[RMDB]
RNA sequence: GGGAACGACUCGAGUAGAGUCGAAAAGCGAUCGCGUUCGGCAGCGUUCGGGGCCGCGCGCCGGAGACCCACUGUGCGAAACUGGCCACCAGGGCAUCCUGCCCUAUGCACAACAAUGGGCGCAUGCAAAAGAACUUCCUUUCGAGGAAGUUCUUUUAAAAGAAACAACAACAACAAC
Reactivity to DMS in 0.01 (KOAc 150mM, MgCl2 10mM, bicine 150mM(pH8.5), 24C), signal-to-noise 2, nucleotides 027 to 126: g020c010g000a040u010c100g000c050g020u010u010c060g000g030c050a100g030c020g010u000u010c090g020g020g000g020c080c030g040c060g000c040g010c000c000g030g000a100g030a160c030c000c030a130c120u000g000u000g020c040g000a100a090a090c170u000g020g000c030c030a070c080c070a070g000g000g010c000a070u010c140c110u020g000c000c010c010u000a050u000g010c050a030c110a070a130c130a060a110u010g000g010g010c000g010c200a060u020g000c150
Reactivity to 2A3 in 0.01 (KOAc 150mM, MgCl2 10mM, bicine 150mM(pH8.5), 24C), signal-to-noise 1, nucleotides 027 to 126: g070c020g100a080u150c090g000c020g070u010u090c070g000g060c050a130g050c100g060u020u060c110g010g010g000g000c020c000g000c010g000c020g000c020c000g060g030a110g030a120c000c060c010a010c120u050g070u050g020c030g040a070a080a120c080u040g060g040c000c000a130c030c020a000g000g060g010c020a100u150c010c060u070g070c000c000c000u050a130u110g000c060a030c010a150a050c060a100a130u040g070g070g000c020g010c030a000u110g040c030